[RMDB]
This 177-nucleotide RNA was probed chemically with DMS. The RNA was probed in 150 mM KOAc, 10 mM MgCl2 and 150 mM bicine (pH 8.5) at 24 C. For DMS, 2,470 sequencing reads were counted.

RNA sequence: GGGAACGACUCGAGUAGAGUCGAAAAUACUUUCUCCGACCGAUGCUGUGGCGCUCUCCGGGAUUGUUGGCGAAGGGCGCAUCCCGAAAAAAAUCAUGGGCAUUUUGCAGGGCGAAGCGUUGAUGAAAAAUGGACUGGUAUUCGUACCAGUCCAUUUAAAAGAAACAACAACAACAAC
Reactivity to DMS in 0.01 (KOAc 150mM, MgCl2 10mM, bicine 150mM(pH8.5), 24C), signal-to-noise 2, nucleotides 027 to 126: u010a090c180u000u000u010c020u000c020c040g020a050c090c050g000a050u000g010c050u010g020u010g020g000c050g020c030u000c030u000c050c010g020g010g000a070u010u020g010u010u010g020g000c050g010a090a060g000g010g000c010g040c050a050u010c010c000c010g000a000a000a040a070a050a070a050u010c070a130u000g010g020g010c100a040u000u000u000u000g020c080a150g010g010g030c170g000a060a060g010c050g010u000u020g030a130u010g000a030a070
The data come from the RNA Mapping Database (RMDB), library OK2TST. Values are in units of 0.01, from 0 to 300, in steps of 10.